[RMDB]
This 207-nucleotide RNA was probed chemically with 2A3 and DMS.
The RNA was probed in 150 mM KOAc, 10 mM MgCl2 and 150 mM bicine (pH 8.5) at 24 C.
For 2A3 the reverse transcriptase was SuperScript II with manganese.
The 2A3 profile rests on 915 reads.
Reactivities are given for positions 27 through 156.
Source: RMDB library OK3TST, as collected in RNAgym.
RNA sequence: GGGAACGACUCGAGUAGAGUCGAAAAUCGGCGGCGUUCACGCCAACUUUUCAGGCGACCAUCCCGGACGUCCUUCCUGAAGAGAAGGCCUAUACGAAUGCCUUAUCCCUGUCGCGCCUGGCGUAUGACAUGGAGAGUCUGGUGAGUCCGAUGCUGGUAAAGCCUAGUCAUUCGUGACUAGGCUUUAAAAAGAAACAACAACAACAAC
Reactivity to 2A3 in 0.01 (KOAc 150mM, MgCl2 10mM, bicine 150mM(pH8.5), 24C), signal-to-noise 1, nucleotides 027 to 156: u070c000g030g020c020g000g020c000g030u040u050c030a050c030g010c010c000a000a000c030u000u000u000u000c000a010g020g000c020g020a000c020c020a050u300c040c090c050g030g030a060c050g020u010c020c000u100u100c010c010u020g010a000a000g000a000g000a020a020g020g000c030c100u180a130u050a210c110g020a050a020u020g000c010c000u020u020a020u050c000c000c000u020g020u000c050g000c010g010c050c190u140g060g010c020g020u100a150u300g000a010c000a020u070g040g040a080g000a010g080u000c090u160g070g020u030g020a030g010u000c010c000g030a020u050g020c040u090g110g030
Reactivity to DMS in 0.01 (KOAc 150mM, MgCl2 10mM, bicine 150mM(pH8.5), 24C), signal-to-noise 2, nucleotides 027 to 156: u010c030g000g000c060g030g020c020g040u000u000c040a190c120g000c010c000a010a160c040u010u010u000u000c000a050g000g020c300g000a120c010c010a090u010c050c030c040g000g010a100c060g020u010c030c050u000u030c010c030u010g010a110a050g010a050g020a030a300g050g040c000c050u000a170u010a110c120g020a070a060u000g010c000c000u000u010a070u000c010c000c000u010g000u000c030g010c000g000c020c020u000g100g000c050g060u010a040u030g000a040c030a070u000g020g000a080g030a070g010u010c040u010g000g000u000g010a090g040u020c020c020g030a140u000g030c030u000g010g000